RNA sequence: GGGAACGACUCGAGUAGAGUCGAAAAGUUCGAGAUCGCGUCAGGCCUGAUAAAGGAGCAACGUAAAACGAACUGCAGUGGUGAAACGUGGGACGACGCUGUUCGAGAGAGCUUGUGAGAUACGUUGGCCUUCGUACACAUUCAACUAUUACGUUUUGUAUACGUCUCUGUUCGCAGAGACGUAUACAAAAGAAACAACAACAACAAC
Reactivity to 2A3 in 0.01 (KOAc 150mM, MgCl2 10mM, bicine 150mM(pH8.5), 24C), signal-to-noise 1, nucleotides 027 to 156: g020u010u020c010g000a010g000a160u130c130g010c000g070u050c070a030g180g000c010c000u130g120a220u150a180a220a040g050g000a010g080c100a020a010c000g030u040a000a000a000a080c000g000a000a000c000u010g060c040a070g010u110g100g000u050g060a180a000a030c020g010u050g010g020g000a000c000g020a040c020g050c050u030g060u030u090c100g010a080g040a000g010a010g110c050u150u050g020u090g110a090g040a060u110a110c000g020u000u030g020g000c000c000u020u020c000g010u000a030c060a000c000a060u220u150c030a140a000c040u070a030u300u090a070c180g080u000u000u000u000
Conditions: 150 mM KOAc, 10 mM MgCl2 and 150 mM bicine (pH 8.5), 24 C.
An RNA of 207 nucleotides, treated with 2A3 and read out base by base.
The 2A3 profile rests on 573 reads.
Values cover nucleotides 27 to 156.